Structure probing data (2A3 and DMS) for a 207-nucleotide construct. Reactivities are rounded to 0.1 and cut off at 0 and 3. 2A3 adducts were read by reverse transcription with SuperScript II with manganese. The RNA was probed in 150 mM KOAc, 10 mM MgCl2 and 150 mM bicine (pH 8.5) at 24 C.
RNA sequence: GGGAACGACUCGAGUAGAGUCGAAAAGAAAGAAAGAAAGCUGACCCUUCUGCUGACGGAUCUUGUGGAGCACCACAGUGCAGAAAGGGAGAGAAGCUUUAAUGCCGACCGUCUGGGCAGCCUUGAAAAAACGGAUUCUUCUUCGGAAGAAUCCGAAGAAUAUAUACUACUUCGGUAGUAUAUAUUCAAAAGAAACAACAACAACAAC
Reactivity to 2A3 in 0.01 (KOAc 150mM, MgCl2 10mM, bicine 150mM(pH8.5), 24C), signal-to-noise 3, nucleotides 027 to 156: g050a010a080a010g040a020a080a020g090a020a030a000g000c040u060g110a080c000c000c000u010u000c010u030g010c030u060g060a070c060g040g030a050u130c080u180u080g010u050g020g040a130g110c120a120c100c000a000c010a020g040u020g020c010a000g040a190a080a050g050g030g010a020g010a000g010a010a020g000c000u050u020u010a100a070u080g010c010c000g050a060c000c000g050u040c080u100g040g000g000c010a010g020c010c010u100u140g100a100a030a010a050a040a030c000g000g000a000u000u010c000u010u000c000u020u030c110g100g000a000a000g010a000a000u020c000c000g000a000a000
Reactivity to DMS in 0.01 (KOAc 150mM, MgCl2 10mM, bicine 150mM(pH8.5), 24C), signal-to-noise 2, nucleotides 027 to 156: g010a160a090a100g000a150a100a070g000a050a030a040g040c020u000g000a230c020c000c000u000u000c000u030g030c000u010g020a160c070g000g010a090u010c040u000u020g000u000g020g010a210g020c210a070c000c020a040c040a090g020u000g020c000a040g000a060a050a110g000g000g000a080g010a120g030a140a050g000c010u010u000u000a070a060u000g010c000c010g010a080c020c040g000u010c060u000g020g010g000c020a050g000c040c090u020u030g000a000a040a130a080a150a220c020g000g000a040u000u000c000u010u000c000u000u010c300g030g010a040a010g010a030a000u000c010c000g030a010a040